[RMDB]
RNA sequence: GGGAACGACUCGAGUAGAGUCGAAAAAGGCAGCUUCCCGGCUUAUAAGCUACGGACGAUGCAAACGUAGCAGGCAUCGAAUUUUCGGCCCUUCGAAAAGCUGAGAUGAGCUCAGCAAGGGAAUCAAGUCUUAUUCGAGAUUCGUCUCGAAUAAGACAAAAGAAACAACAACAACAAC
Reactivity to DMS in 0.01 (KOAc 150mM, MgCl2 10mM, bicine 150mM(pH8.5), 24C), signal-to-noise 3, nucleotides 027 to 126: a080g000g010c070a060g000c090u000u000c010c000c000g010g010c020u000u000a080u010a120a120g050c000u010a050c030g000g020a090c080g000a080u000g020c090a040a090a180c030g000u010a020g020c000a080g000g030c030a090u000c070g010a050a140u000u000u000u000c030g000g010c040c030c050u000u020c060g010a110a050a100a170g030c010u020g000a020g010a300u000g010a150g010c000u010c000a000g000c010a090a040g010g000g000a070a040u010c150a050a140
Reactivity to 2A3 in 0.01 (KOAc 150mM, MgCl2 10mM, bicine 150mM(pH8.5), 24C), signal-to-noise 2, nucleotides 027 to 126: a000g060g000c010a030g000c020u020u000c000c010c020g000g000c010u050u040a150u010a160a060g000c010u000a000c010g080g010a030c100g130a110u150g130c100a130a070a000c040g000u000a020g010c010a010g040g000c000a040u040c050g080a160a150u150u100u030u040c020g020g000c010c020c000u030u030c020g060a100a040a040a010g000c010u000g010a010g020a100u240g150a050g090c000u000c010a000g000c030a020a030g040g000g030a010a020u130c070a130a000